[RMDB]
RNA sequence: GGGAACGACUCGAGUAGAGUCGAAAACACGAAGGUUGGCUAAUCCUGGUCGGACAUCAGGUGGUUAGUGCAAUGGCAUAAGCCAGCUUGGCGCUAAUAGAUACUAAUCGUAGCAUAGCUGAAUAAACCUGACUAAUCGCUUCGGCGAUUAGUCAGGAAAAGAAACAACAACAACAAC
Reactivity to 2A3 in 0.01 (KOAc 150mM, MgCl2 10mM, bicine 150mM(pH8.5), 24C), signal-to-noise 2, nucleotides 027 to 126: c010a000c030g040a000a260g060g000u040u030g000g000c050u050a040a000u010c000c000u040g000g000u030c020g050g080a070c020a040u080c000a000g110g000u070g070g050u070u030a040g000u010g030c080a110a090u030g060g080c000a100u030a300a000g000c000c000a000g050c070u030u070g220g000c070g080c050u000a030a030u060a050g080a040u030a030c050u180a130a000u010c040g000u000a000g020c050a030u010a030g080c030u060g060a000a000u300a150a020a010